[RMDB]
RNA sequence: GGGAACGACUCGAGUAGAGUCGAAAAUUGCACAAAUUAUGAGACUCUGCUUCUUUUUUAUUUUUUGAAAGAUAGUCUCAUUACGUAGCUCCUUCCUAUGCAGACCAGGCUGGCCUUGGACGCAGAGAUUGGCCUGAUUCUGCUGGGACUAAGGCCAGCCGACUCGUAUCUUCGGAUACGAGUCGGCAAAAGAAACAACAACAACAAC
Reactivity to 2A3 in 0.01 (KOAc 150mM, MgCl2 10mM, bicine 150mM(pH8.5), 24C), signal-to-noise 1, nucleotides 027 to 156: u080u090g030c020a050c000a010a250a000u270u030a010u010g000a000g030a000c010u020c090u210g120c030u010u000c010u000u070u050u010u020u040a150u200u180u140u040u000u110g030a030a110a130g010a000u130a100g000u130c000u010c000a010u040u040a060c050g000u020a040g010c000u000c010c000u000u130c000c000u040a060u260g040c000a000g030a030c060c000a000g000g000c020u000g000g010c000c000u080u120g080g040a150c050g060c100a010g030a000g050a200u120u140g050g000c000c000u030g000a080u010u000c010u000g030c000u000g000g000g000a000c050u040a010a010g000g050c090c000a000